[RMDB]
RNA sequence: GGGAACGACUCGAGUAGAGUCGAAAAAGCAGGACCGCGUUACGACGGGGUCCUGCAGCAAUGAGUAGAAGCGGUCAAAUUUGGUGUCGAGUUCCAACAAACCAAAUUCGGGCAUUGCUCACUGCAAAAAACUCUCUUUAGUUCGCUAAAGAGAGAAUCACUACGACGAGUUCGCUCGUCGUAGUGAAAAAGAAACAACAACAACAAC
Reactivity to 2A3 in 0.01 (KOAc 150mM, MgCl2 10mM, bicine 150mM(pH8.5), 24C), signal-to-noise 1, nucleotides 027 to 156: a000g000c000a000g000g000a000c000c000g040c020g100u030u060a100c220g030a030c030g150g020g000g000u000c000c000u000g000c000a000g030c000a000a000u000g000a000g000u010a020g000a120a000g080c090g060g050u060c000a000a000a000u030u000u000g020g020u070g090u180c150g060a110g150u160u090c050c020a040a100c040a100a130a000c000c000a000a000a000u000u040c030g020g020g000c020a040u010u080g000c010u000c030a030c010u010g000c000a000a020a020a000a030a110c030u000c000u010c000u000u010u010a060g020u100u070c220g000c100u000a000a000a000g000a000g000a000g010a000a020